[RMDB]
RNA sequence: GGGAACGACUCGAGUAGAGUCGAAAAAGGUCACGUGUCAGUAGUGAUGACAUUACCAUUUUUGGAAGAAGGAUGUUAUAACAUAGGCGCAUGUUUUGAUGGAAGAUUGUCCAAGUCAAGGAGCGACAUCUAACUCGGAGUUCGCUCCGAGUUAGAUAAAAGAAACAACAACAACAAC
Reactivity to DMS in 0.01 (KOAc 150mM, MgCl2 10mM, bicine 150mM(pH8.5), 24C), signal-to-noise 4, nucleotides 027 to 126: a070g010g010u000c110a070c120g000u000g020u010c040a060g020u000a110g020u010g010a120u000g000a040c030a030u000u000a110c020c020a100u000u000u000u010u000g000g030a110a050g010a090a090g010g000a030u000g010u010u010a050u000a060a050c060a080u010a080g000g010c050g020c050a080u000g000u000u020u010u000g020a110u000g010g010a070a070g000a100u010u000g000u010c030c020a050a120g000u000c050a060a080g010g000a060g030c050g010a050c150
Reactivity to 2A3 in 0.01 (KOAc 150mM, MgCl2 10mM, bicine 150mM(pH8.5), 24C), signal-to-noise 2, nucleotides 027 to 126: a000g120g010u030c030a010c070g040u040g020u050c030a030g020u060a030g020u130g120a100u030g000a010c000a010u000u050a050c010c000a030u110u030u030u180u160g100g010a110a040g000a020a010g070g020a030u020g030u090u070a100u060a170a030c040a040u050a060g050g000c010g000c030a010u040g070u020u120u070u040g070a070u080g050g050a020a010g040a180u000u150g020u000c000c000a030a000g000u030c020a020a040g000g020a040g060c040g040a020c020
This 177-nucleotide RNA was probed chemically with DMS and 2A3.
For DMS the reverse transcriptase was MarathonRT.
It was measured as part of the RMDB library OK2TST.
For 2A3, 1,790 sequencing reads were counted.
For 2A3 the reverse transcriptase was SuperScript II with manganese.